[RMDB]
The record gives the reactivity of an RNA of 170 nucleotides to 2A3 and DMS. For DMS the reverse transcriptase was MarathonRT. For 2A3, 1,891 sequencing reads were counted. The reactions ran in a buffer of 150 mM KOAc, 10 mM MgCl2 and 150 mM bicine (pH 8.5), at 24 C. The data come from the RNA Mapping Database (RMDB), library 15KLIB.
RNA sequence: GGGAACGACUCGAGUAGAGUCGAAAACUCGAUGAAGCAGAAGAUGUUACUGAAUCUGUGCAAGAAGAAGCACAACCAGUAGAAGUACCUGUUGAAGAUAUUGCGCAGGUUGUCAUAGCUGACACCUAAACCCCGGACUUCGGUCCGGGGAAAAGAAACAACAACAACAAC
Reactivity to 2A3 in 0.01 (KOAc 150mM, MgCl2 10mM, bicine 150mM(pH8.5), 24C), signal-to-noise 2, nucleotides 027 to 129: c010u010c000g020a060u130g030a110a000g020c000a000g020a080a000g100a070u070g010u110u040a060c000u020g030a130a120u110c040u030g000u000g020c010a000a000g160a060a010g100a090a070g140c000a040c000a000a010c010c070a000g000u000a020g000a180a000g060u050a130c000c000u000g040u050u010g030a090a010g000a020u090a040u090u050g000c030g000c070a000g060g000u030u030g020u000c020a000u030a000g050c090u050g040a070c010a010c010c000u020a040a070a110
Reactivity to DMS in 0.01 (KOAc 150mM, MgCl2 10mM, bicine 150mM(pH8.5), 24C), signal-to-noise 3, nucleotides 027 to 129: c060u060c040g000a000u000g030a100a010g080c020a040g000a200a000g060a040u090g040u110u000a000c000u140g000a190a060u000c060u020g070u050g010c010a090a050g030a020a070g300a110a000g060c080a050c000a110a030c100c040a140g000u000a020g090a070a040g040u000a150c010c010u000g030u010u000g000a080a000g040a100u000a020u100u030g040c070g020c010a000g000g070u030u040g000u000c090a030u020a060g030c190u070g000a050c060a030c010c000u150a000a000a100